Chemical mapping of a 207-nucleotide RNA with 2A3 and DMS.
The 2A3 profile rests on 1,776 reads.
The reactions ran in a buffer of 150 mM KOAc, 10 mM MgCl2 and 150 mM bicine (pH 8.5), at 24 C.
RNA sequence: GGGAACGACUCGAGUAGAGUCGAAAACUUUCGCUUCUUUGGGUGUUUUGUGUGGUAGGAGGAUUUUGUGGCGUUCGCCUUCUCCCUACCCGGUCCGGCCUGGUACUCCUUCACCUGUUCGAUGAUCCGCUCCUUCCUGACCGGAUCGGCGUGAUAGCUGAUCCUGGUCAUUCGUGACCAGGAUCAGAAAAGAAACAACAACAACAAC
Reactivity to 2A3 in 0.01 (KOAc 150mM, MgCl2 10mM, bicine 150mM(pH8.5), 24C), signal-to-noise 3, nucleotides 027 to 156: c030u080u100u120c060g040c030u070u060c040u100u160u100g030g010g020u100g090u060u130u150u090g130u020g060u110g060g000u030a020g010g050a030g030g010a040u090u100u050u150g130u100g010g020c050g040u130u240c090g010c010c000u050u020c030u040c030c000c000u020a020c000c000c010g010g000u000c000c030g040g040c000c040u000g010g040u030a090c030u010c040c040u000u040c030a040c040c010u030g100u090u100c090g050a140u100g000a050u060c030c010g000c010u030c000c000u090u000c010c000u030g040a090c020c000g000g010a010u020c000g000g000c040g010u080g050a060u110a090g080
Reactivity to DMS in 0.01 (KOAc 150mM, MgCl2 10mM, bicine 150mM(pH8.5), 24C), signal-to-noise 1, nucleotides 027 to 156: c040u000u020u010c050g000c030u000u000c060u000u010u020g010g020g040u010g040u000u000u000u000g020u000g040u000g060g020u000a040g000g020a040g000g020a090u000u000u000u010g050u000g050g020c040g010u010u010c100g020c030c030u010u000c030u000c030c010c010u000a040c010c000c020g000g000u010c000c050g050g010c020c030u020g020g040u010a070c030u020c030c000u010u010c030a040c040c000u010g000u000u000c110g000a110u010g000a060u000c050c030g020c030u010c010c050u000u000c070c060u000g010a070c070c040g000g030a050u010c010g000g020c040g040u000g000a150u020a120g010